[RMDB]
RNA sequence: GGGAACGACUCGAGUAGAGUCGAAAAUGCCAGAAGUGAAAUACAUCUUCGAACUGAACCCGGAUCACGUACUGGUGAAACGUGCGGCAGAUACUGAAGAUGAAGCGAAGUUCAGCGAGUGGGUAGACCAGGAUUAGACGUUCGCGUCUAAUCCUGGAAAAGAAACAACAACAACAAC
Reactivity to 2A3 in 0.01 (KOAc 150mM, MgCl2 10mM, bicine 150mM(pH8.5), 24C), signal-to-noise 2, nucleotides 027 to 126: u110g020c000c010a000g020a060a030g020u110g050a100a010a010u110a080c020a010u010c010u010u040c060g000a060a040c010u010g000a090a100c000c010c000g010g050a130u100c000a000c030g080u210a140c100u250g190g000u100g030a100a050a010c010g060u050g000c090g000g000c000a000g000a070u070a190c010u040g000a040a000g010a060u070g000a070a020g100c060g070a120a020g050u060u050c060a080g050c020g040a010g090u090g010g040g040u080a020g100a090
Reactivity to DMS in 0.01 (KOAc 150mM, MgCl2 10mM, bicine 150mM(pH8.5), 24C), signal-to-noise 1, nucleotides 027 to 126: u030g020c010c000a150g030a110a160g000u000g010a080a030a020u000a130c110a020u000c010u000u000c000g000a150a120c030u000g000a160a090c040c060c010g000g000a240u030c010a000c030g000u010a080c200u020g000g000u000g000a060a050a090c020g030u020g020c130g020g000c000a020g020a090u010a140c110u020g000a010a030g000a030u040g000a120a030g010c070g020a110a040g000u000u010c030a040g010c030g000a060g030u000g000g000g030u000a080g000a160